[RMDB]
RNA sequence: GGGAACGACUCGAGUAGAGUCGAAAACAAUGAAACUGCGCAAUCCUAAAGCGCCCAUAAGGAAUGAUCGUAAGGCUCAACGAUCAUUCCACAAGAUGUUGAGCCUCAAAGCGCAAGCCAAGCUUGCAAACGGUCUACGAUUCGUCGUAGACCGUUUAAAAGAAACAACAACAACAAC
Reactivity to 2A3 in 0.01 (KOAc 150mM, MgCl2 10mM, bicine 150mM(pH8.5), 24C), signal-to-noise 2, nucleotides 027 to 126: c040a000a030u110g110a140a010a100c090u100g010c020g020c020a020a190u080c010c010u080a150a090a080g000c000g060c040c030c000a120u130a110a030g000g000a010a000u020g000a000u010c000g010u020a110a110g000g040c000u010c010a000a030c000g000a000u020c010a000u000u000c000c000a020c020a000a020g040a050u160g040u230u060g010a010g000c000c000u040c020a130a160a010g090c050g000c040a000a000g000c030c070a160a010g020c000u000u040g000c050
Reactivity to DMS in 0.01 (KOAc 150mM, MgCl2 10mM, bicine 150mM(pH8.5), 24C), signal-to-noise 2, nucleotides 027 to 126: c300a110a170u000g020a150a080a090c180u000g050c010g000c010a070a180u000c020c060u000a040a180a150g010c020g010c010c300c060a050u010a050a100g040g000a000a000u000g000a000u000c000g010u000a060a070g000g010c000u010c010a050a040c000g000a010u000c000a000u000u020c000c030a040c230a070a130g000a070u000g000u000u000g010a010g020c000c000u000c260a070a110a200g040c060g020c000a010a050g000c000c110a090a090g000c030u000u020g000c020